An RNA of 207 nucleotides, treated with 2A3 and read out base by base. Values cover nucleotides 27 to 156.
[RMDB]
RNA sequence: GGGAACGACUCGAGUAGAGUCGAAAACUAUCAACUUACUCACCGCGGUCACGGUACUCAUGAUGCUAUUUUCGGUGGAUACGCCGAUCGGAACGCCGUCCGAGACCUCCGGUCCGUCUCGACGGCACUGCUCGGGCGGCCUGGGUCUGAGGUCCGAGCUAUUUAGCGAGUUCGCUCGCUAAAUAGCAAAAGAAACAACAACAACAAC
Reactivity to 2A3 in 0.01 (KOAc 150mM, MgCl2 10mM, bicine 150mM(pH8.5), 24C), signal-to-noise 2, nucleotides 027 to 156: c020u100a090u290c080a110a120c060u060u220a090c050u060c050a060c030c030g010c070g020g090u100c090a010c030g040g020u070a040c030u030c020a020u130g050a020u110g080c050u100a220u140u160u050u010c020g000g010u030g070g080a110u140a210c080g000c040c010g010a020u090c010g010g030a090a020c110g000c000c010g010u020c000c040g010a000g020a000c030c110u090c100c050g010g010u000c000c020g030u020c000u050c200g140a030c000g020g000c050a010c010u030g050c010u000c010g000g010g000c010g000g000c000c000u010g000g000g000u010c030u030g040a040g010g040u000c020c020g030a020